[RMDB]
RNA sequence: GGGAACGACUCGAGUAGAGUCGAAAAACAGGCACAGCCAAGCGUCCAGCCACAGGAGCAUCCUCCAGCGCAGGUGUCAGUACAGCCACCAGAGCAGACCCAUGAGCAGCCUCACACCCAGCCGCAGCUAGCCAUUGACUUUCGAGUCAAUGGCUAGAAAAGAAACAACAACAACAAC
Reactivity to DMS in 0.01 (KOAc 150mM, MgCl2 10mM, bicine 150mM(pH8.5), 24C), signal-to-noise 2, nucleotides 027 to 126: a050c060a020g000g010c020a030c060a020g020c000c020a070a140g000c140g000u000c000c000a070g060c000c020a050c140a080g000g000a130g000c000a120u000c090c030u000c040c120a090g000c080g080c120a030g020g000u000g020u030c040a080g020u000a100c090a110g010c040c010a060c050c070a080g010a090g000c080a060g000a110c050c000c060a050u010g000a070g000c010a130g000c090c010u010c040a080c080a080c010c010c000a130g000c080c010g000c090a090g000
Reactivity to 2A3 in 0.01 (KOAc 150mM, MgCl2 10mM, bicine 150mM(pH8.5), 24C), signal-to-noise 3, nucleotides 027 to 126: a010c090a030g050g020c030a020c030a070g030c030c020a050a010g050c040g060u020c020c040a010g030c040c030a070c010a050g080g000a040g050c020a030u050c000c000u050c020c030a020g020c010g000c060a010g000g020u000g070u080c010a020g060u050a070c020a020g000c040c020a040c020c000a040g000a010g070c030a050g010a040c010c000c000a020u060g020a000g030c020a000g030c000c000u030c000a060c000a010c010c000c000a020g060c050c000g010c010a030g040